[RMDB]
RNA sequence: GGGAACGACUCGAGUAGAGUCGAAAAACUGCCAUACGUGGCAGAAACACGCCAUACCAGGACUAAACAGCGUGUCUAAAAAACAGUCCUUCAUACCUGAUCUGGAGGGUAGAUCAGGAAUACUAAAAAAAUCGGGUGAAGUUCGCUUCACCCGAAACAUCAAUUGAGGGUUCGCCCUCAAUUGAUGAAAAGAAACAACAACAACAAC
Reactivity to 2A3 in 0.01 (KOAc 150mM, MgCl2 10mM, bicine 150mM(pH8.5), 24C), signal-to-noise 2, nucleotides 027 to 156: a000c000u000g000c010c000a020u030a070c180g120u060g000g000c000a000g020a000a010a000c000a000c000g000c000c030a030u100a100c010c080a020g010g010a010c010u060a060a130a050c050a040g010c000g020u010g000u040c090u080a030a020a010a000a000a010c040a000g000u000c030c010u010u080c050a060u060a160c000c000u010g000a000u010c000u030g040g040a070g080g070g040u040a000g010a000u010c030a000g050g000a000a010u110a060c100u200a060a020a000a060a000a000a120u030c010g000g020g000u000g010a000a010g010u050u170c160g040c090u010u000c000a000c000c000c000g000a000a000a000
Reactivity to DMS in 0.01 (KOAc 150mM, MgCl2 10mM, bicine 150mM(pH8.5), 24C), signal-to-noise 1, nucleotides 027 to 156: a140c000u000g000c010c020a080u000a110c180g060u000g030g060c010a000g030a160a180a070c030a040c010g010c080c020a170u010a070c060c020a050g150g030a080c050u000a210a160a080c070a090g020c000g010u000g000u000c120u000a010a040a050a130a060a040c070a040g000u000c000c030u010u010c070a170u000a110c010c020u020g070a000u000c000u020g050g030a140g000g020g010u020a050g000a120u000c000a000g030g030a060a070u010a170c100u020a000a000a020a060a030a070a090u000c000g020g000g040u000g000a010a010g020u000u000c290g010c010u000u000c030a040c000c000c000g000a000a000a010

The record gives the reactivity of an RNA of 207 nucleotides to 2A3 and DMS.